[RMDB]
RNA sequence: GGGAACGACUCGAGUAGAGUCGAAAAGGUGGCUCUGAGAGUGGGACUCCUCAUCCAGAGACAGAGUCACCGAUUUAGCAUGUUCGUCCUACGAGGCACGUGCUAUCGUUGUAGGACGUUCAUGCGAGGGAUCCAUUAGCUUCGGUUAGUGGAUCCCAAAAGAAACAACAACAACAAC
Reactivity to DMS in 0.01 (KOAc 150mM, MgCl2 10mM, bicine 150mM(pH8.5), 24C), signal-to-noise 9, nucleotides 027 to 126: g000g010u000g000g000c000u000c000u000g000a080g010a140g010u030g000g010g000a090c070u010c080c080u010c130a290u010c010c010a020g000a190g000a130c010a000g000a010g010u000c000a000c000c000g010a020u020u020u020a110g010c000a000u000g010u000u000c010g010u000c000c000u000a010c010g010a050g010g010c080a190c300g020u050g010c060u010a040u020c060g010u020u030g010u000a010g000g010a020c010g000u000u000c010a000u000g010c010g000a100
Reactivity to 2A3 in 0.01 (KOAc 150mM, MgCl2 10mM, bicine 150mM(pH8.5), 24C), signal-to-noise 9, nucleotides 027 to 126: g000g000u000g000g000c000u000c000u010g090a110g030a060g230u140g010g010g030a040c040u100c050c030u040c040a070u040c010c020a030g030a010g030a140c000a000g000a000g000u000c000a000c000c000g000a000u010u010u080a020g000c000a000u000g000u000u000c000g000u000c000c000u010a010c020g030a050g050g050c070a050c270g170u300g060c060u140a290u270c050g070u040u160g030u020a000g000g000a000c000g000u000u000c000a000u000g000c000g000a120

Chemical mapping of a 177-nucleotide RNA with DMS and 2A3.
The reactions ran in a buffer of 150 mM KOAc, 10 mM MgCl2 and 150 mM bicine (pH 8.5), at 24 C.
Reactivities are given for positions 27 through 126.
It was measured as part of the RMDB library OK1LIB.
DMS adducts were read by reverse transcription with MarathonRT.
The 2A3 profile rests on 167,747 reads.